[RMDB]
RNA sequence: GGGAACGACUCGAGUAGAGUCGAAAAAGCGAGUACACACUCCUAGAAAAUAGGAGUGAUCCACGCGUAAAGUACUCGCAAGUAGCAAAUCAAAGUAUCCGAUAAGGAUACACGCGUGGGCUACAAAACCCAUGCAUAAUUUCGAUUAUGCAUGGGUAAAAGAAACAACAACAACAAC
Reactivity to 2A3 in 0.01 (KOAc 150mM, MgCl2 10mM, bicine 150mM(pH8.5), 24C), signal-to-noise 9, nucleotides 027 to 126: a000g000c000g000a000g000u000a000c070a000c000a000c010u010c000c000u020a030g100a070a300a020a020u030a000g000g000a000g000u000g010a010u020c010c000a000c000g000c000g010u040a060a120a100g000u000a000c000u010c000g000c000a000a030g060u110a010g060c080a050a080a110u200c040a090a090a050g000u010a000u000c000c010g050a150u110a300a050g000g000a000u000a000c010a000c000g000c000g000u000g000g010g000c030u090a050c030a050a090a020
Reactivity to DMS in 0.01 (KOAc 150mM, MgCl2 10mM, bicine 150mM(pH8.5), 24C), signal-to-noise 4, nucleotides 027 to 126: a070g000c000g010a010g010u010a000c000a280c020a010c000u000c000c000u010a020g000a130a070a110a150u000a010g000g010a020g020u000g000a040u020c020c000a000c010g020c000g000u010a060a070a120g010u000a000c000u000c040g010c010a020a080g010u020a120g000c130a090a080a100u040c190a070a070a090g010u000a000u010c000c000g020a100u080a140a170g010g000a000u010a000c020a010c040g000c030g000u000g010g010g020c200u010a060c120a070a050a120
Chemical mapping of a 177-nucleotide RNA with 2A3 and DMS. The 2A3 profile rests on 26,304 reads. 2A3 adducts were read by reverse transcription with SuperScript II with manganese. It was measured as part of the RMDB library OK1LIB. The reactions ran in a buffer of 150 mM KOAc, 10 mM MgCl2 and 150 mM bicine (pH 8.5), at 24 C.